[RMDB]
RNA sequence: GGGAACGACUCGAGUAGAGUCGAAAAUGAUUGAAGAAUAUGGCCAAAAACCCGUAGUCAGACCGGAAAACUGGGGUGGAUAUAUGAUAAUCCCGGAUGAGAUUGAGUUUUGGCAGGGUAGAGAUAACCUAAUUACUACGUUCGCGUAGUAAUUAGGAAAAGAAACAACAACAACAAC
Reactivity to 2A3 in 0.01 (KOAc 150mM, MgCl2 10mM, bicine 150mM(pH8.5), 24C), signal-to-noise 2, nucleotides 027 to 126: u080g020a030u080u110g020a050a050g010a100a070u130a070u200g040g010c010c000a080a060a000a040a050c030c020c000g030u020a030g020u000c010a000g020a020c020c000g010g000a090a070a020a020c030u040g000g010g000g000u020g000g060a020u090a030u040a070u260g080a030u050a130a010u030c000c000c000g000g020a030u110g020a030g040a030u080u240g050a150g120u070u080u100u030g020g020c020a010g000g000g000u040a030g000a010g000a090u080a050a020
Reactivity to DMS in 0.01 (KOAc 150mM, MgCl2 10mM, bicine 150mM(pH8.5), 24C), signal-to-noise 5, nucleotides 027 to 126: u010g000a110u010u000g010a100a080g010a120a070u000a050u000g000g020c020c030a060a070a090a120a040c030c010c020g010u010a070g010u000c010a040g010a060c030c030g020g000a080a070a090a060c060u010g010g010g020g010u000g030g020a090u010a100u000a120u010g010a140u010a080a050u000c030c010c010g010g010a110u010g000a060g000a120u000u000g000a070g010u000u000u000u000g020g030c020a070g000g020g000u010a060g020a100g010a100u000a070a170